Description:
Conditions: 150 mM KOAc, 10 mM MgCl2 and 150 mM bicine (pH 8.5), 24 C. Structure probing data (2A3) for a 207-nucleotide construct. It was measured as part of the RMDB library M2RFPK.
RNA sequence: GGGAACGACUCGAGUAGAGUCGAAAAGCAUCGACGACGGUCCUGCCAUGAGACCGUAACGAGUACAUGUCGCCUCGAAUGGCGUCGGGGAGCCGGCAGCUUACCCCAAGGAUGAGCGCCUAAUGCCUAUACCCGAUUCGCUUCGGCGAAUCGGGAAGCAGCUCGUAAUAUUCGUAUUACGAGCUGCAAAAGAAACAACAACAACAAC
Reactivity to 2A3 in 0.01 (KOAc 150mM, MgCl2 10mM, bicine 150mM(pH8.5), 24C), signal-to-noise 1, nucleotides 027 to 156: g020c060a110u030c020g070a060c010g000a010c000g010g030u010c030c040u060g190c040c010a230u240g010a080g000a200c000c000g010u000a030a010c020g000a010g030u080a040c020a020u120g030u020c010g050c030c000u030c040g140a120a210u140g030g000c000g010u030c010g010g000g010g000a050g060c000c080g040g020c000a020g000c000u030u120a080c000c000c070c080a000a080g110g000a160u140g040a030g010c040g020c000c000u050a080a000u080g000c030c050u060a090u100a190c000c000c040g000a000u020u000c000g000c000u070u070c300g170g010c000g000a000a000u000c000g020g000g000a000a000